The data come from the RNA Mapping Database (RMDB), library OK3TST.
The record gives the reactivity of an RNA of 207 nucleotides to 2A3.
The 2A3 profile rests on 336 reads.
2A3 adducts were read by reverse transcription with SuperScript II with manganese.

RNA sequence: GGGAACGACUCGAGUAGAGUCGAAAAAUUGACUUCGGUCCAGGGAAGAGACCUGGCUCACUGCCUUCUUUCCUCAUCCAUAGGCUGGCUCCAAGACCUAUGUGAAAUAAUGGCCACAGUGAUAUUCACUGUACAGAGAAUUCUCCAGGGUGGAGAACACGCCCUCCACGUUCGCGUGGAGGGCGUGAAAAGAAACAACAACAACAAC
Reactivity to 2A3 in 0.01 (KOAc 150mM, MgCl2 10mM, bicine 150mM(pH8.5), 24C), signal-to-noise 1, nucleotides 027 to 156: a010u110u090g000a010c000u010u020c110g060g020u010c030c010a000g000g000g080a120a000g130a010g010a030c020c040u060g040g080c000u000c070a100c140u120g010c000c000u020u120c000u000u020u040c040c000u000c030a050u040c070c000a000u000a000g030g000c030u010g120g000c000u150c160c000a060a120g060a300c010c000u000a100u040g100u100g090a000a000a000u080a020a100u110g030g000c000c000a000c000a000g000u000g040a130u210a190u300u300c010a000c000u000g000u090a100c000a020g160a000g020a020a230u110u100c050u040c000c000a050g300g000g000u050g010g010a000g000a040a000
The reactions ran in a buffer of 150 mM KOAc, 10 mM MgCl2 and 150 mM bicine (pH 8.5), at 24 C.